Structure probing data (2A3 and DMS) for a 207-nucleotide construct.
For DMS the reverse transcriptase was MarathonRT.
The reactions ran in a buffer of 150 mM KOAc, 10 mM MgCl2 and 150 mM bicine (pH 8.5), at 24 C.
The 2A3 profile rests on 1,827 reads.
RNA sequence: GGGAACGACUCGAGUAGAGUCGAAAACUUGUCUCACCAAGGUUCUACCUGGAAUUAGAAUUAAUUGUAUGCUACCAUUAUGCCCCAUAUUGUUAUUCUCGAACAGUGUGUUCCUUGAAGUUAGAUAGCACUCUUUUUCGUAGUCUGGGGGAGCACACAGCUAGGGAUUAUUCGUAAUCCCUAGCUGAAAAGAAACAACAACAACAAC
Reactivity to 2A3 in 0.01 (KOAc 150mM, MgCl2 10mM, bicine 150mM(pH8.5), 24C), signal-to-noise 4, nucleotides 027 to 156: c020u070u080g040u070c040u000c060a080c060c010a050a030g030g010u050u030c020u120a110c010c010u050g050g110a120a060u120u070a100g010a080a020u090u110a110a050u130u080g040u050a040u140g050c030u100a050c030c040a060u150u090a060u300g050c030c010c000c020a010u040a040u070u040g010u020u030a050u110u020c050u000c050g090a120a090c030a070g020u010g000u000g010u130u030c010c030u020u070g030a040a040g020u050u010a050g010a070u060a040g020c040a020c020u030c000u030u090u050u120u140c090g040u090a020g060u010c040u050g040g010g030g010g000a000g030c020a010c000a000
Reactivity to DMS in 0.01 (KOAc 150mM, MgCl2 10mM, bicine 150mM(pH8.5), 24C), signal-to-noise 3, nucleotides 027 to 156: c080u010u000g020u020c000u000c060a130c090c020a110a050g000g020u000u000c040u000a070c020c020u010g010g020a070a120u000u000a080g000a080a070u010u000a040a080u000u000g000u010a070u000g000c030u010a070c020c040a150u000u010a100u000g000c020c000c040c010a040u000a060u000u000g000u020u000a250u000u000c030u000c040g000a090a090c080a120g060u000g030u000g010u000u000c020c010u010u000g000a100a110g020u010u000a070g010a080u010a060g020c050a080c070u000c030u020u020u000u000u000c090g000u010a100g020u000c060u000g010g010g010g000g020a080g030c020a040c040a100

For DMS, 6,357 sequencing reads were counted.